[RMDB]
RNA sequence: GGGAACGACUCGAGUAGAGUCGAAAAUUAGGAUUACUUUUAUUUAUGGGUUGUUCUUUGCCUCUAUUUAAAAGGACAUAUUAAAGUUAGAACUAAGCUGUAGAUUUUGUCGCAUUGCUAUUUGUGGAAACGGGUUCGACUCCCGUCAUCUCCACCACCAUUCUCAUCAGUUCGCUGAUGAGAAUGGAAAAGAAACAACAACAACAAC
Reactivity to 2A3 in 0.01 (KOAc 150mM, MgCl2 10mM, bicine 150mM(pH8.5), 24C), signal-to-noise 1, nucleotides 027 to 156: u060u050a000g000g070a040u070u120a250c000u010u120u070u100a100u030u020u020a010u050g030g030g000u010u040g030u000u040c060u090u080u090g020c000c000u020c010u000a020u060u000u040a000a000a000a010g010g020a010c020a000u220a020u060u150a120a070a040g020u000u060a010g000a060a000c020u040a110a000g020c020u050g000u100a010g050a130u110u140u100u170g040u010c010g000c010a030u040u090g010c010u150a130u150u080u160g030u000g000g000a000a020a020c020g030g000g000u080u060c030g030a070c080u020c040c000c010g000u000c000a030u000c000u010c010c010a000c000c000a010